The record gives the reactivity of an RNA of 170 nucleotides to 2A3 and DMS. For DMS, 20,562 sequencing reads were counted. Source: RMDB library 15KLIB, as collected in RNAgym.
RNA sequence: GGGAACGACUCGAGUAGAGUCGAAAAACUUAUGCAGCUCUUAGAAACUCUUUAACUAAUGAUGCCUAUUCACGAUUUUUGGGGUUGUUUAACAAGUAUAAGUACUUCUCUGGUGCUAUGGAAACAGUAAUCACUGACUUCGGUCAGUGAAAAAGAAACAACAACAACAAC
Reactivity to 2A3 in 0.01 (KOAc 150mM, MgCl2 10mM, bicine 150mM(pH8.5), 24C), signal-to-noise 3, nucleotides 027 to 129: a000c040u080u060a000u080g000c000a000g000c040u020c100u140u160a030g030a070a060a040c000u090c020u140u030u060a000a030c000u020a280a000u190g070a050u160g090c040c010u180a190u240u130c110a020c150g100a080u000u070u020u000u000g000g000g000g000u060u040g080u040u110u000a000a000c090a050a000g010u010a060u030a110a000g020u020a040c020u070u050c060u020c010u070g040g020u020g000c000u020a010u140g070g000a000a100a000c000a010g040u110a060a000
Reactivity to DMS in 0.01 (KOAc 150mM, MgCl2 10mM, bicine 150mM(pH8.5), 24C), signal-to-noise 4, nucleotides 027 to 129: a110c050u000u000a050u010g010c050a100g010c120u010c150u020u040a050g000a060a030a030c090u020c030u040u030u020a050a060c060u040a110a080u030g010a060u020g000c190c100u020a070u060u030c090a090c280g000a100u000u000u000u000u000g020g020g030g010u000u000g010u010u080u030a040a040c070a000a000g030u000a040u000a010a010g000u040a040c060u040u010c070u000c070u020g020g050u020g040c080u000a100u000g000g000a060a020a060c030a030g000u030a110a110